[RMDB]
RNA sequence: GGGAACGACUCGAGUAGAGUCGAAAAACGGGCAGUGGCGAUGGCAACGCGGCAGCCGCAGGGUCGACUUCUUCGCAGCCGCAACAGACGGGGUACGGGCAAAGAGGGGAGCUCGUUCUGUUGGAAGUACUAAUGCUACUUUCGAGUAGCAUUAGUAAAAAGAAACAACAACAACAAC
Reactivity to DMS in 0.01 (KOAc 150mM, MgCl2 10mM, bicine 150mM(pH8.5), 24C), signal-to-noise 6, nucleotides 027 to 126: a100c060g020g000g020c080a070g020u020g000g010c080g010a080u030g010g000c070a100a080c120g010c010g010g010c030a130g000c080c040g030c110a100g010g010g000u010c070g020a090c120u000u010c050u000u000c090g010c060a120g010c010c020g030c030a060a060c090a080g010a070c060g000g000g000g000u020a050c080g000g000g010c040a040a070a090g000a100g000g000g010g000a070g010c020u000c020g000u010u020c060u010g000u010u000g000g000a080a070g000
Reactivity to 2A3 in 0.01 (KOAc 150mM, MgCl2 10mM, bicine 150mM(pH8.5), 24C), signal-to-noise 9, nucleotides 027 to 126: a000c020g000g010g000c030a040g030u050g090g020c050g070a110u070g040g020c030a060a040c070g010c000g040g000c010a020g050c050c020g000c040a020g030g020g020u080c030g050a070c030u070u030c000u040u030c070g000c030a030g000c000c020g020c010a020a030c010a020g060a010c030g000g000g010g020u090a040c030g010g030g000c050a090a080a020g070a080g010g010g000g010a010g010c020u000c020g020u060u000c020u030g020u010u020g020g030a080a040g050